[RMDB]
RNA sequence: GGGAACGACUCGAGUAGAGUCGAAAACCUGAUGAUAAGUGCUUUGCUAAUAAGCACCGGUCCUUCACACAAUGGUAUCAUGAGCAUGUUGGUGGUGUCUAUGACAACUCUAUCACAUGCCCAUUGAGACUUUUUUCUACUUCGGUAGAAAAAAGUCAAAAGAAACAACAACAACAAC
Reactivity to 2A3 in 0.01 (KOAc 150mM, MgCl2 10mM, bicine 150mM(pH8.5), 24C), signal-to-noise 1, nucleotides 027 to 126: c020c010u030g030a090u070g000a020u030a190a030g020u020g000c020u130u050u030g100c070u080a160a060u090a060a150g040c010a000c010c010g000g000u030c000c040u130u090c050a050c000a010c020a140a110u110g060g070u160a100u140c050a030u040g060a000g050c000a010u030g010u080u100g090g000u010g000g000u000g000u080c020u060a130u220g010a010c000a040a070c030u010c020u050a010u060c010a010c000a000u000g020c000c000c000a010u000u060g010a020
Reactivity to DMS in 0.01 (KOAc 150mM, MgCl2 10mM, bicine 150mM(pH8.5), 24C), signal-to-noise 1, nucleotides 027 to 126: c000c000u010g010a090u000g000a040u000a110a110g030u000g000c000u000u000u000g000c290u020a130a120u010a000a030g040c000a030c000c070g010g000u000c030c110u000u020c030a070c260a110c150a070a070u000g010g000u000a090u010c040a010u000g000a010g020c020a040u000g000u010u000g030g000u000g000g000u000g030u000c020u020a200u010g050a110c150a050a030c110u000c010u010a010u030c050a010c000a010u000g000c000c000c000a000u000u000g000a120